Source: RMDB library ARCHII, as collected in RNAgym. The record gives the reactivity of an RNA of 207 nucleotides to 2A3. For 2A3 the reverse transcriptase was SuperScript II with manganese. The reactions ran in a buffer of 150 mM KOAc, 10 mM MgCl2 and 150 mM bicine (pH 8.5), at 24 C.
RNA sequence: GGGAACGACUCGAGUAGAGUCGAAAAUGUAAGACGGGGAAUCACGAGGGGUCAAACCAAAUCAAGCUGGCGUGGAUUCCCCCACCUGAGGGAUGAAGCGUAAGAUAUAAUUCAGGUUAGCUAUUCAUUCGCGUGUCGGUUCGCAGGUGGUAGUGAACACCGUAGGAAGGUUCGCCUUCCUACGGUGAAAAGAAACAACAACAACAAC
Reactivity to 2A3 in 0.01 (KOAc 150mM, MgCl2 10mM, bicine 150mM(pH8.5), 24C), signal-to-noise 1, nucleotides 027 to 156: u210g020u020a010a040g040a060c010g000g020g000g000a000a030u020c000a020c050g020a030g020g040g020g010u080c080a040a020a010c050c010a020a070a110u130c030a060a010g030c070u050g000g010c010g030u030g050g000a000u010u040c000c000c000c000c010a030c000c000u040g010a030g010g090g000a030u080g030a030a000g000c000g010u060a110a100g030a040u120a000u060a170a110u070u060c030a000g000g100u060u060a010g000c000u070a010u060u170c010a060u110u100c050g000c010g040u070g070u040c030g020g100u030u040c020g000c020a030g000g000u020g020g000u010a020g020u040g030a030a020